[RMDB]
RNA sequence: GGGAACGACUCGAGUAGAGUCGAAAAGAAAGAAAGAAAGCGGUUGGGUGGGUCCAUCGACCGUCGUGGCGUAUUCGGACGCUUUACCACGACGCGAGUAAAUAGCGAGACCGACCACCCCCUUUAACAGAGGUAUAGUAGUUCGCUACUAUACCAACAUUAACUGGAUGUUCGCAUCCAGUUAAUGAAAAGAAACAACAACAACAAC
Reactivity to 2A3 in 0.01 (KOAc 150mM, MgCl2 10mM, bicine 150mM(pH8.5), 24C), signal-to-noise 2, nucleotides 027 to 156: g050a000a060a000g060a040a050a010g070a050a050a000g070c140g100g060u180u110g110g010g050u080g040g000g020u000c030c050a080u020c010g030a040c030c000g010u000c000g000u010g000g020c030g020u060a150u050u190c080g140g060a020c060g040c000u100u090u070a030c000c000a010c000g010a000c000g000c030g010a040g040u120a060a120a170u080a050g060c050g020a050g010a040c010c020g020a010c000c020a010c000c000c020c000c000u020u120u050a080a050c080a030g090a030g080g000u000a000u000a000g020u000a000g010u010u050c120g020c120u000a000c000u000a000u000a000c000c000a000a000
Reactivity to DMS in 0.01 (KOAc 150mM, MgCl2 10mM, bicine 150mM(pH8.5), 24C), signal-to-noise 2, nucleotides 027 to 156: g020a150a090a090g000a110a100a220g000a090a160a080g010c090g000g000u000u000g000g000g040u000g010g000g020u000c030c010a090u010c020g010a120c140c000g040u000c000g000u000g010g020c000g010u000a060u000u010c060g020g000a190c080g020c100u010u000u010a040c020c000a040c030g030a030c000g010c030g020a280g030u000a030a050a160u000a100g020c060g030a110g000a090c010c010g000a010c000c000a040c010c010c000c040c040u010u000u000a070a110c160a180g010a160g000g010u000a020u000a000g010u000a020g010u000u000c300g020c020u000a010c000u000a020u000a000c000c000a000a070
The record gives the reactivity of an RNA of 207 nucleotides to 2A3 and DMS. For 2A3 the reverse transcriptase was SuperScript II with manganese. The DMS profile rests on 2,885 reads. For DMS the reverse transcriptase was MarathonRT.